[RMDB]
RNA sequence: GGGAACGACUCGAGUAGAGUCGAAAAUGCCGGCAGUUCGCGAGCAGCAUUCGCCGCUUGCUUCGCCGAGCUCUGUACGAUUCCGUUGGACACUGCUAAAGUUAGGCUUCAGCUCCAAAAGAAAGCAAUGCAGGUUCUAUUUCGAUAGAACCUGCAUAAAAGAAACAACAACAACAAC
Reactivity to DMS in 0.01 (KOAc 150mM, MgCl2 10mM, bicine 150mM(pH8.5), 24C), signal-to-noise 2, nucleotides 027 to 126: u010g010c030c000g040g010c000a060g000u020u010c300g030c010g020a000g010c020a070g030c000a240u010u010c260g000c110c050g040c000u000u020g020c020u000u010c060g040c020c040g000a110g010c000u000c100u030g010u030a050c090g010a080u010u000c010c070g030u000u000g000g000a040c120a130c070u000g010c140u000a070a070a080g000u000u000a110g000g000c060u010u000c080a050g030c120u010c010c040a050a100a070a070g000a090a090a070g030c080a030

Chemical mapping of a 177-nucleotide RNA with DMS. Values cover nucleotides 27 to 126. The reactions ran in a buffer of 150 mM KOAc, 10 mM MgCl2 and 150 mM bicine (pH 8.5), at 24 C. The data come from the RNA Mapping Database (RMDB), library OK2TST. DMS adducts were read by reverse transcription with MarathonRT.